The record gives the reactivity of an RNA of 177 nucleotides to 2A3.
For 2A3 the reverse transcriptase was SuperScript II with manganese.
Reactivities are given for positions 27 through 126.
For 2A3, 509 sequencing reads were counted.
[RMDB]
RNA sequence: GGGAACGACUCGAGUAGAGUCGAAAAAUGGCAAUGCGUCCGUAUCAAGUGUAUGCGGUAGAAGCACUUAUUCAACAAGCGACUGAGACAGGGAAUAAUGGAUAUGUAUGGCAUACAACUGGAAGUGCCUCGGGAGUGCUUUCGAGCACUCCCGAGGAAAAGAAACAACAACAACAAC
Reactivity to 2A3 in 0.01 (KOAc 150mM, MgCl2 10mM, bicine 150mM(pH8.5), 24C), signal-to-noise 1, nucleotides 027 to 126: a000u130g000g010c040a000a240u140g000c010g030u000c000c010g000u030a060u140c050a050a100g070u000g000u210a010u030g000c010g090g040u100a030g070a080a000g060c020a000c040u010u040a000u080u150c100a060a060c030a200a020g100c030g130a030c020u120g000a010g000a170c000a000g000g000g090a050a090u070a030a010u030g060g030a040u060a030u140g130u000a000u010g020g000c040a100u110a000c030a170a110c010u040g000g030a030a000g060u030g110